This 177-nucleotide RNA was probed chemically with 2A3 and DMS. The 2A3 profile rests on 5,284 reads. It was measured as part of the RMDB library OK2TST. The reactions ran in a buffer of 150 mM KOAc, 10 mM MgCl2 and 150 mM bicine (pH 8.5), at 24 C.

RNA sequence: GGGAACGACUCGAGUAGAGUCGAAAAUUCAGGGGCUGAGGCUUUAAGUGCUCUGGGCUCUUCUUGCUUCACGCAGCCUCCUCCAUGCCAUGCUGCUGAGCUUUGGGCAGACCUCGCUAGCCCGCAGGGUGGAUUACAAGUUCGCUUGUAAUCCACCAAAAGAAACAACAACAACAAC
Reactivity to 2A3 in 0.01 (KOAc 150mM, MgCl2 10mM, bicine 150mM(pH8.5), 24C), signal-to-noise 3, nucleotides 027 to 126: u120u070c030a030g020g000g030g000c000u020g040a010g020g010c020u120u150u220a150a040g070u050g030c010u020c030u040g040g020g020c010u010c000u060u000c040u100u140g020c010u090u100c070a020c080g000c010a010g020c010c010u030c000c010u000c020c010a040u080g030c000c000a070u100g000c020u000g000c000u020g020a010g000c000u020u030u040g020g000g000c010a030g020a130c000c000u010c020g030c050u050a020g020c000c000c010g000c010a020g110
Reactivity to DMS in 0.01 (KOAc 150mM, MgCl2 10mM, bicine 150mM(pH8.5), 24C), signal-to-noise 4, nucleotides 027 to 126: u010u000c070a150g010g000g010g020c020u010g000a030g000g010c100u010u000u000a070a100g020u010g000c000u000c060u000g000g000g010c020u000c020u010u000c050u010u000g010c020u000u000c080a080c220g010c050a050g000c070c040u000c030c020u000c040c050a080u000g000c030c070a080u000g010c010u000g010c040u010g010a030g020c030u000u000u010g010g000g020c020a060g000a130c020c020u000c010g000c160u010a090g000c010c000c020g010c180a120g010